RNA sequence: GGGAACGACUCGAGUAGAGUCGAAAACUCAACGCGGCGGGGCAGCGCCUAGCCAAGCGCGAUGGUGCCGUGACCAUGCGCGAGAUGCCCGACAUUCUGCCGCGCGUGGCUGAGUCUUUGGGGCUAAGCGCCCACACUCUGCCUGGCAUGCUCGAAAGGACCGAUUAUUAUUCGUAAUAAUCGGUCCAAAAGAAACAACAACAACAAC
Reactivity to 2A3 in 0.01 (KOAc 150mM, MgCl2 10mM, bicine 150mM(pH8.5), 24C), signal-to-noise 1, nucleotides 027 to 156: c000u030c090a040a000c100g000c000g010g020c000g110g000g000g000c040a000g020c000g010c060c070u010a030g000c000c000a070a090g100c210g000c000g100a010u160g000g070u040g000c130c040g090u050g040a120c080c000a000u100g000c050g000c030g070a000g000a030u050g000c000c000c050g070a070c110a090u190u110c000u090g000c020c000g000c000g040c000g140u060g000g000c000u050g000a000g010u060c040u090u090u280g000g000g030g000c080u090a300a120g140c120g050c140c000c000a060c000a000c000u000c000u030g080c000c000u000g010g050c180a150u130g060c110u130c130g050a110a050a050
Reactivity to DMS in 0.01 (KOAc 150mM, MgCl2 10mM, bicine 150mM(pH8.5), 24C), signal-to-noise 1, nucleotides 027 to 156: c040u010c020a120a010c000g010c020g060g030c020g000g000g010g080c070a070g030c060g050c010c070u010a070g000c000c100a160a140g030c000g010c020g000a100u010g010g020u000g000c020c200g060u000g000a050c020c050a030u040g010c020g000c000g030a160g010a160u020g000c040c010c030g020a130c060a160u020u000c090u010g020c020c000g000c030g020c000g000u000g020g000c030u000g000a020g010u010c050u000u040u020g020g000g010g040c030u000a060a130g050c120g000c050c020c000a110c080a020c010u010c020u000g010c000c000u010g010g030c020a140u000g010c060u000c010g000a100a220a300
This 207-nucleotide RNA was probed chemically with 2A3 and DMS. The RNA was probed in 150 mM KOAc, 10 mM MgCl2 and 150 mM bicine (pH 8.5) at 24 C. For DMS the reverse transcriptase was MarathonRT. 2A3 adducts were read by reverse transcription with SuperScript II with manganese. It was measured as part of the RMDB library OK3TST.